[RMDB]
RNA sequence: GGGAACGACUCGAGUAGAGUCGAAAAGAUAUGGAUGGGAUAUGAGCGAUAAGAUGCUCGGAAACGAGGCAUCUUUUGACGCUCGACCAUCCUAAGUCAAACAGCUCACUGUUCGCAGUGAGCUGAAGCGGAUUACGUAGUUCGCUACGUAAUCCGCAAAAGAAACAACAACAACAAC
Reactivity to 2A3 in 0.01 (KOAc 150mM, MgCl2 10mM, bicine 150mM(pH8.5), 24C), signal-to-noise 1, nucleotides 027 to 126: g000a020u040a010u130g030g000a020u010g010g030g020a040u080a120u300g010a050g010c050g010a020u020a120a000g030a010u000g040c000u000c060g000g020a030a030a010c000g010a010g280g080c010a000u020c110u000u010u000u100g120a060c050g020c010u000c000g000a000c010c000a010u030c010c000u000a010a000g000u000c020a050a130a140c010a020g000c000u020c010a000c050u010g070u060u110c270g030c160a000g000u020g000a010g000c000u000g000a020a010
Reactivity to DMS in 0.01 (KOAc 150mM, MgCl2 10mM, bicine 150mM(pH8.5), 24C), signal-to-noise 1, nucleotides 027 to 126: g020a020u000a250u010g000g010a040u000g000g010g000a150u020a060u030g050a020g020c000g030a140u000a000a010g030a020u000g030c000u010c000g000g000a040a050a130c010g000a010g020g000c010a000u000c000u000u000u000u010g020a130c160g000c000u000c000g010a090c010c000a010u000c000c010u000a050a060g000u000c030a060a090a300c000a010g010c000u000c000a010c000u000g000u010u000c250g010c000a010g020u000g020a000g000c030u000g000a010a070
The record gives the reactivity of an RNA of 177 nucleotides to 2A3 and DMS. The data come from the RNA Mapping Database (RMDB), library TTRDEL. For 2A3 the reverse transcriptase was SuperScript II with manganese. For 2A3, 1,309 sequencing reads were counted. DMS adducts were read by reverse transcription with MarathonRT. Values cover nucleotides 27 to 126.